[RMDB]
RNA sequence: GGGAACGACUCGAGUAGAGUCGAAAACGUGUAAGUAUACUCAUCCACGGGGUCAACGGGCAGACCUACCAAGUUCUCACGAUAACCGUGAGCGUUGACGAAAAUAGGGAUUGUGCCAACAGCCAUUGCCUCCACGGGUGGUAGACCAAAGCCCUCAAACCUCACAUAGUUUCGACUAUGUGAGGUUAAAAGAAACAACAACAACAAC
Reactivity to 2A3 in 0.01 (KOAc 150mM, MgCl2 10mM, bicine 150mM(pH8.5), 24C), signal-to-noise 3, nucleotides 027 to 156: c040g020u050g050u130a080a080g020u000a050u020a050c210u230c050a020u000c020c000a040c060g000g010g010g000u020c020a030a060c060g030g010g010c020a020g060a070c010c000u020a050c000c050a080a010g070u070u040c040u000c000a010c000g110a140u120a190a080c120c020g000u000g000a020g010c090g040u030u100g040a030c060g060a030a050a060a080u090a020g060g010g110a080u110u120g060u100g120c050c010a100a020c040a110g000c000c010a020u030u020g030c000c000u040c010c010a010c020g000g010g000u020g010g000u010a010g000a020c000c010a050a070a020g040c010c000c010u030c020a050
Reactivity to DMS in 0.01 (KOAc 150mM, MgCl2 10mM, bicine 150mM(pH8.5), 24C), signal-to-noise 2, nucleotides 027 to 156: c060g030u010g020u000a090a070g010u000a060u010a040c060u010c060a100u000c010c030a110c000g020g010g020g010u000c020a060a010c020g000g010g010c020a150g000a030c040c020u000a140c010c040a050a300g000u000u000c000u000c020a080c060g010a290u000a090a170c150c050g000u010g000a060g050c300g000u000u010g010a050c060g010a060a060a080a090u000a070g020g010g010a170u000u020g010u010g000c020c000a010a070c050a220g000c000c010a040u010u010g000c080c010u000c020c020a070c040g030g020g000u000g000g010u020a000g000a020c010c020a020a100a250g000c020c000c000u000c030a110